[RMDB]
RNA sequence: GGGAACGACUCGAGUAGAGUCGAAAAGAGUCAUUGGCAUGUGAGACUAAUAUACCUGCAUGCUAGUCUUCAGGUUCUGAUGGAAGUGACAUGCGUGAUGCUGUCAUGUGUUACUGUCAGGACUCGACAUAAUCUCGUUAUUCGUAACGAGAUUAUGAAAAGAAACAACAACAACAAC
Reactivity to DMS in 0.01 (KOAc 150mM, MgCl2 10mM, bicine 150mM(pH8.5), 24C), signal-to-noise 9, nucleotides 027 to 126: g000a080g010u010c090a100u010u010g000g000c010a010u000g010u000g010a040g010a090c140u010a100a110u020a150u020a110c060c020u000g010c020a020u000g000c010u000a040g010u000c060u000u000c050a080g010g010u000u000c020u000g000a020u000g000g010a120a180g010u000g000a010c000a010u030g030c000g010u030g010a110u040g010c010u000g000u000c000a010u000g010u010g010u010u020a130c000u000g010u000c000a010g000g000a010c000u000c070g010a170
Reactivity to 2A3 in 0.01 (KOAc 150mM, MgCl2 10mM, bicine 150mM(pH8.5), 24C), signal-to-noise 9, nucleotides 027 to 126: g060a010g070u100c050a090u090u110g010g000c000a010u010g020u080g170a060g020a040c050u100a130a170u170a040u070a190c010c010u010g000c000a000u000g000c000u010a030g030u020c050u080u080c050a020g020g010u000u010c000u010g010a010u010g020g030a090a080g020u000g010a000c020a050u300g010c020g070u300g120a130u300g010c020u010g000u010c000a010u030g080u010g040u070u090a120c010u010g000u000c000a000g000g010a000c020u010c040g010a000